[RMDB]
RNA sequence: GGGAACGACUCGAGUAGAGUCGAAAAAAAAAGAUAUGGAUCCUCUACCCACCGCUGUCACUCCGAAGAACUAGCUCGGAAACGAGCUAGGGAGGAGGGACAGCGAGGAGGAUCCUAAGUCAAAAAACAUGUAAGAUUAGUUCGCUAAUCUUACAUGAAAAGAAACAACAACAACAAC
Reactivity to 2A3 in 0.01 (KOAc 150mM, MgCl2 10mM, bicine 150mM(pH8.5), 24C), signal-to-noise 2, nucleotides 027 to 126: a010a010a010a010a010g150a070u220a100u150g010g000a000u000c000c010u020c000u150a300c020c020c020a030c020c000g000c000u000g000u000c000a020c040u000c010c010g300a300a050g010a030a010c010u010a000g000c000u000c010g040g000a060a070a040c020g010a000g000c000u010a010g010g000g010a010g000g000a000g000g010g000a000c000a000g000c020g000a000g000g000a010g000g000a000u000c000c000u000a000a010g020u050c090a040a010a000a080a100a160
Reactivity to DMS in 0.01 (KOAc 150mM, MgCl2 10mM, bicine 150mM(pH8.5), 24C), signal-to-noise 4, nucleotides 027 to 126: a020a060a060a120a060g000a090u010a240u000g010g010a010u000c000c000u000c000u000a140c030c010c010a300c140c000g010c000u000g010u000c000a040c000u010c000c020g000a100a100g000a120a170c000u000a010g000c000u000c000g020g000a050a090a150c000g010a010g000c010u000a000g000g000g000a060g020g000a010g000g000g010a020c010a010g010c000g020a010g020g010a000g000g000a000u010c000c000u000a020a060g010u020c070a010a060a090a120a110a120